[RMDB]
RNA sequence: GGGAACGACUCGAGUAGAGUCGAAAACCCUGUACACACCGCCCGUCACACCCUGGGAAUUGGUUUCGCCCGAAGCAUCGGACCAAUGAUCACCCAUGACUUCUGUGUACCACUAGUGCCACAAAGGCUUUUGGUGGUCUUAUUGGCGCAUACCACGCAUCCAUUCAGGCUUCGGCCUGAAUGGAUGAAAAGAAACAACAACAACAAC
Reactivity to 2A3 in 0.01 (KOAc 150mM, MgCl2 10mM, bicine 150mM(pH8.5), 24C), signal-to-noise 2, nucleotides 027 to 156: c000c000c000u040g040u090a070c050a030c030a050c010c070g010c020c010c000g080u060c010a060c000a030c070c000c030u060g010g000g010a060a050u050u050g070g000u030u090u150c020g010c000c010c070g030a090a020g030c050a050u130c030g040g030a040c030c000a000a090u080g030a050u080c070a050c040c010c000a030u040g080a130c020u030u050c070u040g000u000g040u050a030c000c010a040c060u100a050g050u030g130c000c000a010c050a100a050a000g060g000c000u050u140u000u060g230g010u040g040g020u040c010u010u100a090u020u040g000g000c030g020c010a020u020a150c060c070a170c140g000
Record summary
Structure probing data (2A3) for a 207-nucleotide construct. For 2A3 the reverse transcriptase was SuperScript II with manganese. Source: RMDB library VIROID, as collected in RNAgym.